The record gives the reactivity of an RNA of 177 nucleotides to DMS and 2A3. The RNA was probed in 150 mM KOAc, 10 mM MgCl2 and 150 mM bicine (pH 8.5) at 24 C. Values are in units of 0.01, from 0 to 300, in steps of 10.
[RMDB]
RNA sequence: GGGAACGACUCGAGUAGAGUCGAAAAGUUAACUGCGUGUUUUGGCGUGAAUCCUUAAUGUAGUUCUUCGUUGUUAACAACCAUGCAUUGAGGUAAAUCCGUGGUUUGUUUUGCAACUCUUCCGCCAUCCCACCCCUAAAUUCGUUUAGGGGUGGGAAAAAGAAACAACAACAACAAC
Reactivity to DMS in 0.01 (KOAc 150mM, MgCl2 10mM, bicine 150mM(pH8.5), 24C), signal-to-noise 1, nucleotides 027 to 126: g000u010u010a020a060c000u000g000c020g040u010g020u000u000u020u000g000g020c040g010u020g000a130a130u010c010c020u000u010a050a050u020g010u010a040g010u010u000c130u000u010c170g020u000u000g000u000u010a040a010c010a030a020c020c040a050u000g020c210a000u010u000g010a090g000g000u000a070a030a030u010c120c030g040u010g000g010u000u010u000g020u000u000u000u000g000c010a040a030c050u010c180u010u000c030c020g020c060c050a190
Reactivity to 2A3 in 0.01 (KOAc 150mM, MgCl2 10mM, bicine 150mM(pH8.5), 24C), signal-to-noise 1, nucleotides 027 to 126: g040u050u070a070a040c010u030g030c030g030u110g070u010u080u070u100g040g000c050g020u020g030a030a130u120c010c000u040u060a030a000u020g050u060a000g090u090u010c020u030u070c110g000u010u050g000u040u030a100a020c040a000a010c020c000a040u020g000c000a010u000u020g080a070g080g130u110a030a070a100u040c020c000g000u000g010g010u040u010u110g070u050u100u010u110g000c000a000a090c010u030c030u130u010c030c010g000c010c010a030
Values cover nucleotides 27 to 126. 2A3 adducts were read by reverse transcription with SuperScript II with manganese. The data come from the RNA Mapping Database (RMDB), library OK2TST. For 2A3, 938 sequencing reads were counted. For DMS, 1,605 sequencing reads were counted.